RNA sequence: GGGAACGACUCGAGUAGAGUCGAAAAAGUCACCUAUUACCAUAGGUGACAUUUGAACCAGCGAACAAUUCAGUUGCGAGAUUCGAGGUUUCAGUCUGAAUCAUAGUAGCCAUUACGAUGGCUACAACUCACUCCCGACUGUUCGCAGUCGGGAGAACUAUUUGUCAGUGUUCGCACUGACAAAUAGAAAAGAAACAACAACAACAAC
Reactivity to DMS in 0.01 (KOAc 150mM, MgCl2 10mM, bicine 150mM(pH8.5), 24C), signal-to-noise 1, nucleotides 027 to 156: a050g010u000c000a000c000c000u000a010u000u010a200c300c270a170u010a010g010g010u000g040a010c030a030u000u000u000g040a120a190c000c060a100g020c070g010a040a100c020a240a090u010u010c010a150g040u000u000g000c000g010a110g000a050u000u010c010g010a230g010g000u010u000u000c010a060g000u000c050u040g010a040a070u010c090a110u030a190g000u000a000g010c000c010a060u020u000a160c180g050a140u000g010g000c000u000a010c000a030a070c150u020c050a100c000u000c090c000c000g020a020c000u010g020u000u000c280g020c000a030g010u010c010g000g000g000a000g010a010a030
Reactivity to 2A3 in 0.01 (KOAc 150mM, MgCl2 10mM, bicine 150mM(pH8.5), 24C), signal-to-noise 4, nucleotides 027 to 156: a010g000u000c000a010c000c010u000a030u030u220a110c100c080a020u020a020g000g000u000g000a000c000a000u030u010u120g010a030a010c010c000a030g150c000g000a000a000c010a050a110u010u030c000a010g000u010u000g000c000g000a000g000a000u010u010c010g000a020g010g050u160u210u300c040a030g140u040c000u000g000a000a010u040c030a060u080a070g000u010a000g000c020c000a000u040u060a050c280g130a010u020g010g000c010u000a000c000a000a000c020u080c040a080c010u000c000c000c000g010a000c000u020g080u070u140c270g000c120a000g000u000c000g000g000g000a000g000a000a000